[RMDB]
RNA sequence: GGGAACGACUCGAGUAGAGUCGAAAAGAUAUGGAGGUCACAACGAGAAUCGGAUCGGAAACGAUCCGAAUUCGAUGAGUUGAUGACCUCCUAAGUCAAAACCCGUUAUCCUUCGGGAUAACGGGAAGUAUGGAGAUAAGUUCGCUUAUCUCCAUACAAAAGAAACAACAACAACAAC
Reactivity to DMS in 0.01 (KOAc 150mM, MgCl2 10mM, bicine 150mM(pH8.5), 24C), signal-to-noise 7, nucleotides 027 to 126: g010a010u000a020u010g000g000a010g010g000u000c000a040c010a000a010c000g000a030g010a020a010u000c000g000g000a010u000c000g020g000a000a000a020c000g010a010u000c000c000g000a000a010u000u000c000g030a200u020g010a130g010u000u010g000a140u000g010a010c000c000u000c000c000u000a000a060g000u000c000a160a080a130a200c000c000c000g010u000u000a000u000c000c000u000u010c290g020g010g010a000u000a000a000c000g010g000g000a000a020
Reactivity to 2A3 in 0.01 (KOAc 150mM, MgCl2 10mM, bicine 150mM(pH8.5), 24C), signal-to-noise 6, nucleotides 027 to 126: g000a000u000a000u040g000g000a010g010g000u000c010a000c000a020a010c020g090a020g000a270a000u000c000g000g000a000u000c000g000g000a010a000a000c010g000a000u020c010c000g000a010a020u010u000c000g040a080u300g060a030g000u000u020g060a300u010g000a010c000c000u000c000c000u000a000a000g000u000c000a000a010a040a100c000c000c000g000u010u000a000u000c010c000u040u090c300g150g000g000a000u000a000a000c000g000g000g000a000a010